Structure probing data (DMS and 2A3) for a 177-nucleotide construct. Source: RMDB library OK2TST, as collected in RNAgym. For 2A3 the reverse transcriptase was SuperScript II with manganese. Reactivities are rounded to 0.1 and cut off at 0 and 3. Values cover nucleotides 27 to 126.
[RMDB]
RNA sequence: GGGAACGACUCGAGUAGAGUCGAAAAAGUUCAGAUUAGGCCUAGGGACUCUUGCACCUUUAAGGUUAAAACGCCCGGAACUAUGUACACAAUGUCUAGUGGUAGUCGUCGCUGGUCCAGCUUUGGCACGAUUAAACUCUUUCGAGAGUUUAAUCGUAAAAGAAACAACAACAACAAC
Reactivity to DMS in 0.01 (KOAc 150mM, MgCl2 10mM, bicine 150mM(pH8.5), 24C), signal-to-noise 3, nucleotides 027 to 126: a100g000u000u000c040a100g000a120u000u000a120g010g020c020c020u010a120g010g010g020a070c060u000c090u010u000g020c100a090c020c030u000u000u010a110a070g010g000u010u000a050a070a120a120c170g000c030c010c050g010g030a070a060c050u010a020u000g010u000a050c090a080c150a090a090u010g010u010c040u010a070g010u000g000g000u000a060g000u010c060g020u000c060g000c040u000g010g010u000c020c050a080g000c090u000u000u000g020g040c130
Reactivity to 2A3 in 0.01 (KOAc 150mM, MgCl2 10mM, bicine 150mM(pH8.5), 24C), signal-to-noise 2, nucleotides 027 to 126: a000g010u020u050c010a020g020a180u050u210a080g060g000c010c020u020a000g050g000g030a040c030u030c060u140u120g010c070a050c000c000u100u140u090a090a080g020g030u030u100a040a210a020a010c060g000c000c000c000g010g000a010a000c020u030a040u120g050u070a040c050a000c020a110a100u100g010u030c020u090a040g030u040g040g000u030a050g030u060c030g000u000c020g000c060u020g010g030u000c000c050a050g010c090u080u110u070g060g000c020